[RMDB]
RNA sequence: GGGAACGACUCGAGUAGAGUCGAAAACUUUGGACGGUAAUUUCAGAACAGAGGUUGAUCCCGACCUAUCUGCUUUCUAUGUUAAGGAUGGUAAAUACUUUACAAGUGAACCACCCGUAACAUAUUCGAAAUAAAGGAGGUUCGCCUCCUUUAUUUCAAAAGAAACAACAACAACAAC
Reactivity to DMS in 0.01 (KOAc 150mM, MgCl2 10mM, bicine 150mM(pH8.5), 24C), signal-to-noise 3, nucleotides 027 to 126: c100u010u010u000g010g030a090c130g000g020u000a060a090u000u000u010c130a110g010a050a100c030a050g030a030g010g010u010u000g000a140u000c010c030c010g000a020c010c040u000a130u010c030u000g010c160u000u000u000c130u010a000u000g010u000u010a050a050g000g000a010u000g000g010u000a030a060a090u000a010c020u010u010u030a130c250a110a120g010u000g000a210a020c000c000a010c020c000c010g010u010a000a020c010a000u000a040u000u000c150
Reactivity to 2A3 in 0.01 (KOAc 150mM, MgCl2 10mM, bicine 150mM(pH8.5), 24C), signal-to-noise 1, nucleotides 027 to 126: c020u170u100u130g110g090a090c090g060g010u080a110a130u040u200u220c080a060g000a070a060c000a010g050a030g040g020u000u030g030a090u040c010c000c000g020a000c000c010u020a060u040c040u000g030c010u090u100u070c040u030a020u010g010u010u000a020a040g000g000a010u000g050g020u060a150a160a070u050a070c010u000u090u040a100c140a050a010g000u010g040a020a000c030c000a000c000c000c000g030u000a000a010c010a000u060a110u040u250c050